[RMDB]
Source: RMDB library 15KLIB, as collected in RNAgym.
An RNA of 170 nucleotides, treated with DMS and 2A3 and read out base by base.
DMS adducts were read by reverse transcription with MarathonRT.

RNA sequence: GGGAACGACUCGAGUAGAGUCGAAAAACAAGGAAAUAGGAGAAGGAACGGUAGAAAAGAGCGAGCCCUCCGAUCCGAUGGGGCCCUGGACCCCUCAGCUCUGGAGACUUCCGACCUGUGAGGUCGAUAAGUUCACACUUCGGUGUGAACAAAAGAAACAACAACAACAAC
Reactivity to DMS in 0.01 (KOAc 150mM, MgCl2 10mM, bicine 150mM(pH8.5), 24C), signal-to-noise 7, nucleotides 027 to 129: a040c100a100a030g000g040a030a050a040u040a080g030g020a010g030a050a040g000g000a000a040c140g020g030u000a020g000a080a090a080a080g030a070g000c120g030a050g050c010c000c000u030c020c090g030a090u000c020c040g020a050u030g000g020g030g030c060c020c060u000g020g060a050c010c010c010c000u030c070a070g030c120u010c030u030g000g000a080g040a060c130u000u000c090c030g010a070c040c010u000g070u050g020a070g000g000u010c020g030a050u000a010a100
Reactivity to 2A3 in 0.01 (KOAc 150mM, MgCl2 10mM, bicine 150mM(pH8.5), 24C), signal-to-noise 5, nucleotides 027 to 129: a000c020a030a010g050g020a010a080a010u130a090g010g040a040g010a050a030g030g010a010a010c050g020g060u100a040g110a040a110a040a000g110a000g010c060g010a010g000c000c000c000u000c020c010g030a060u060c020c000g010a020u090g000g000g010g030c000c000c030u040g040g040a070c010c000c000c000u040c020a030g010c020u000c030u040g030g010a050g000a030c010u090u000c050c020g010a030c020c000u090g040u120g120a070g020g010u000c010g010a020u030a110a020
2A3 adducts were read by reverse transcription with SuperScript II with manganese.